An RNA of 207 nucleotides, treated with 2A3 and DMS and read out base by base. It was measured as part of the RMDB library OK3TST. For 2A3 the reverse transcriptase was SuperScript II with manganese. For DMS the reverse transcriptase was MarathonRT. The reactions ran in a buffer of 150 mM KOAc, 10 mM MgCl2 and 150 mM bicine (pH 8.5), at 24 C. For 2A3, 521 sequencing reads were counted.
RNA sequence: GGGAACGACUCGAGUAGAGUCGAAAAUAGGAUGCCCGGCAUCAAGUGAGUGCUAAUCCAUUUUCAUAUAUAUGAUUAACUAGUAGCACAACGAGGAAAAGCAACUACUGUUGAGUUUCCAGACAAAAGAAGCAGAGCUGUAGGUCUUGGCAAAAAAUAAAUGAUUAUCCUUCGGGAUAAUCAUUUAAAAAGAAACAACAACAACAAC
Reactivity to 2A3 in 0.01 (KOAc 150mM, MgCl2 10mM, bicine 150mM(pH8.5), 24C), signal-to-noise 1, nucleotides 027 to 156: u260a010g060g030a030u030g060c030c120c080g010g030c050a100u070c030a140a120g050u030g210a060g040u020g020c030u070a090a060u050c030c010a020u030u090u040u060c060a030u190a050u100a060u080a040u210g000a020u100u030a030a120c030u050a080g060u060a000g040c000a000c030a030a140c020g010a120g040g000a000a120a080a000g000c020a030a050c010u260a020c020u100g000u020u020g030a030g000u000u000u010c020c000a030g010a050c030a030a230a040a030g100a000a000g000c050a010g040a020g130c020u020g010u100a010g030g010u020c030u080u070g030g040c020a030a030a030a020a010a030
Reactivity to DMS in 0.01 (KOAc 150mM, MgCl2 10mM, bicine 150mM(pH8.5), 24C), signal-to-noise 1, nucleotides 027 to 156: u000a100g010g010a110u010g000c000c000c000g000g050c020a130u000c040a050a140g000u010g010a180g030u000g020c000u000a030a120u000c010c020a210u000u000u000u000c000a000u000a180u000a070u000a070u000g000a100u000u010a020a100c050u000a140g020u000a000g000c010a040c020a060a070c040g020a200g010g010a030a030a060a140g000c010a020a010c030u000a070c100u000g000u000u000g000a120g000u000u000u000c070c010a120g000a180c060a060a090a120a150g010a120a090g000c010a070g000a060g030c000u010g030u000a070g020g020u000c050u000u000g000g020c020a010a010a080a130a050a130